An RNA of 177 nucleotides, treated with DMS and 2A3 and read out base by base.
[RMDB]
RNA sequence: GGGAACGACUCGAGUAGAGUCGAAAAGGCGUCUUCGCUGCCUCGGCCGCCCUGCACUGACCGGUAGCCGCCGUAAUUGCGGCAUUGUUCCCAUAAAAGGAUGUGGGUGUGGGUGGCGAAGUAGCAGCCACUACGUGCUCUUCGGAGCACGUAGUGGAAAAGAAACAACAACAACAAC
Reactivity to DMS in 0.01 (KOAc 150mM, MgCl2 10mM, bicine 150mM(pH8.5), 24C), signal-to-noise 1, nucleotides 027 to 126: g020g010c060g000u000c030u010u000c080g010c010u010g010c000c020u000c090g020g030c030c010g020c010c010c010u000g070c030a050c070u000g020a090c050c050g000g000u000a110g010c010c020g020c010c210g000u010a080a070u000u000g010c020g000g000c000a120u020u010g000u000u000c010c000c000a130u030a070a080a100a160g010g000a060u010g020u010g000g040g000u010g000u010g000g000g010u000g010g000c030g020a000a010g000u000a090g030c030a210g000
Reactivity to 2A3 in 0.01 (KOAc 150mM, MgCl2 10mM, bicine 150mM(pH8.5), 24C), signal-to-noise 2, nucleotides 027 to 126: g110g010c050g040u010c060u060u010c010g000c020u000g000c010c050u040c050g170g010c040c010g000c000c000c010u040g050c060a050c060u120g050a050c050c000g050g060u090a070g010c020c000g000c000c010g120u060a030a140u120u200g000c000g010g040c010a000u040u160g010u030u000c050c000c020a010u160a040a220a020a010g080g030a120u140g000u120g080g000g000u020g020u050g030g000g000u000g010g030c000g000a000a000g000u090a000g050c020a010g030
It was measured as part of the RMDB library OK2TRN. For 2A3 the reverse transcriptase was SuperScript II with manganese. The reactions ran in a buffer of 150 mM KOAc, 10 mM MgCl2 and 150 mM bicine (pH 8.5), at 24 C.